Conditions: 150 mM KOAc, 10 mM MgCl2 and 150 mM bicine (pH 8.5), 24 C.
The record gives the reactivity of an RNA of 207 nucleotides to 2A3.
2A3 adducts were read by reverse transcription with SuperScript II with manganese.
[RMDB]
RNA sequence: GGGAACGACUCGAGUAGAGUCGAAAAUCUGCGUUCGCGCAGAACGACGGGGUCAGGUGGACGAUAGUAACUUUGAUCACACUGAAGCCUCCACGGUGUGGGAGUUAGUCGUCGUAACAUCCUGACGGAGGCACCCACUAUGUCUGUUCGCAGACAAUACUCACUGCUCAUUCGUGAGCAGUGAGUAAAAAGAAACAACAACAACAAC
Reactivity to 2A3 in 0.01 (KOAc 150mM, MgCl2 10mM, bicine 150mM(pH8.5), 24C), signal-to-noise 2, nucleotides 027 to 156: u000c000u010g030c000g000u060u000c220g000c000g000c110a000g000a040a060c100g090a060c080g050g010g000g040u050c010a000g060g040u030g020g020a000c010g000a000u020a030g300u190a100a010c100u300u150u030g030a040u050c000a000c000a000c000u020g080a050a010g020c000c000u000c010c000a000c010g040g000u000g020u000g000g040g030a040g010u050u060a050g060u090c020g020u000c000g010u030a110a030c020a070u160c020c010u010g000a060c010g010g000a000g000g000c000a080c010c010c000a060c090u120a210u190g000u000c010u020g030u040u030c160g080c120a010g010a000c000a000a010